RNA sequence: GGGAACGACUCGAGUAGAGUCGAAAAGGUGGAGGGGUGUGUUCAGUUUGAGGGAGGAUGAUAAAAUGGAACGGAGAUUGCAAGGAGACGUAGAAAAUAAAGUAGGAGCAAAUGGAUUUUCUGCUUGACCAUAAACCAUAUUCGUAUGGUUUAUGGUAAAAGAAACAACAACAACAAC
Reactivity to 2A3 in 0.01 (KOAc 150mM, MgCl2 10mM, bicine 150mM(pH8.5), 24C), signal-to-noise 9, nucleotides 027 to 126: g080g010u100g030g040a080g010g020g020g000u060g020u030g010u050u080c050a070g040u030u140u190g090a110g010g030g010a040g030g010a030u070g010a010u110a050a080a040a050u140g040g000a020a020c030g010g000a030g010a060u070u100g030c040a040a030g030g000a030g030a000c030g010u040a020g080a050a070a010a020u180a030a070a000g050u050a020g030g040a020g010c020a020a030a150u110g080g020a080u070u030u020u010c010u010g040c020u020u090g020
Reactivity to DMS in 0.01 (KOAc 150mM, MgCl2 10mM, bicine 150mM(pH8.5), 24C), signal-to-noise 9, nucleotides 027 to 126: g000g020u020g000g010a100g010g010g010g000u010g020u020g010u010u010c090a110g020u000u020u020g010a130g000g010g010a090g000g010a050u010g010a080u020a030a040a090a080u010g000g010a050a080c090g000g010a080g010a090u010u010g010c080a060a060g000g000a100g010a050c100g010u010a060g000a050a040a040a060u020a040a040a070g010u010a040g000g000a040g010c060a040a070a080u010g000g010a100u010u000u000u000c020u000g010c080u000u010g000